[RMDB]
RNA sequence: GGGAACGACUCGAGUAGAGUCGAAAAGAAGCUGUCUUCGGACAGCUUCGGUUUAUUUCGUGUAAUCGUCGAGUCGUUCGCAUGAUUACAUGAAAUAAUUUGCUGUCUGCGGAUUCGUCCGCAGAAACCCUACUCUAGUAUUCGUACUAGAGUAGGGAAAAGAAACAACAACAACAAC
Reactivity to DMS in 0.01 (KOAc 150mM, MgCl2 10mM, bicine 150mM(pH8.5), 24C), signal-to-noise 8, nucleotides 027 to 126: g000a010a010g010c000u000g010u000c000u000u020c200g020g010a010c000a000g010c000u000u000c000g000g000u000u000u000a000u000u000u000c000g020u000g010u000a000a000u000c000g010u010c060g010a020g010u000c080g010u000u000c010g010c090a080u000g000a000u000u000a000c000a000u000g000a000a010a000u000a010a020u000u000u000g010c080u000g010u000c000u000g010c000g000g000a040u000u010c210g010u000c000c000g010c000a010g000a020a060a130
Reactivity to 2A3 in 0.01 (KOAc 150mM, MgCl2 10mM, bicine 150mM(pH8.5), 24C), signal-to-noise 7, nucleotides 027 to 126: g000a000a010g000c000u000g010u010c010u030u100c260g070g000a000c000a000g000c000u000u000c000g000g000u010u010u000a010u000u000u010c000g000u000g000u010a010a020u010c030g070u030c030g030a010g080u100c060g100u130u000c010g040c030a060u080g000a000u000u010a010c000a010u010g010a000a010a000u020a010a030u070u100u160g120c060u080g040u070c000u000g000c000g000g010a020u030u030c190g070u010c060c000g000c000a000g000a010a000a000
An RNA of 177 nucleotides, treated with DMS and 2A3 and read out base by base. For 2A3 the reverse transcriptase was SuperScript II with manganese. The reactions ran in a buffer of 150 mM KOAc, 10 mM MgCl2 and 150 mM bicine (pH 8.5), at 24 C.